RNA sequence: GGGAACGACUCGAGUAGAGUCGAAAAGAGCGUCGAGAGACGAAGAGAAGUGCACCGAUCAGCAACGGCGAACGUAAUGGUGCACAAGAGUAAGUCAGUGUAACGUUCUCAGGGCACUGGAGGCAGACGAUGGUACGGUCUUCGGACCGUACCAUCGAAAAGAAACAACAACAACAAC
Reactivity to 2A3 in 0.01 (KOAc 150mM, MgCl2 10mM, bicine 150mM(pH8.5), 24C), signal-to-noise 2, nucleotides 027 to 126: g130a000g000c000g000u000c000g000a040g000a000g000a210c050g030a140a000g200a000g000a200a040g000u000g000c000a000c000c000g000a100u000c040a000g140c050a040a230c050g260g000c010g010a090a180c000g000u060a110a110u220g000g000u010g010c000a010c000a000a040g040a000g040u200a160a060g000u000c020a090g000u000g090u180a130a100c040g040u000u010c140u020c000a010g000g000g040c040a000c000u060g020g010a020g080g040c000a000g040a050
Reactivity to DMS in 0.01 (KOAc 150mM, MgCl2 10mM, bicine 150mM(pH8.5), 24C), signal-to-noise 2, nucleotides 027 to 126: g000a020g000c000g020u000c000g000a160g000a160g000a000c010g000a070a050g050a160g030a110a160g040u000g030c010a000c000c010g060a200u020c220a060g060c280a140a030c160g030g020c230g030a080a120c060g000u070a050a100u040g000g020u000g000c010a000c020a010a040g000a110g000u100a120a150g020u000c090a030g000u000g000u030a090a100c080g000u000u000c000u000c000a020g000g000g030c000a050c120u000g030g000a090g000g020c210a090g020a170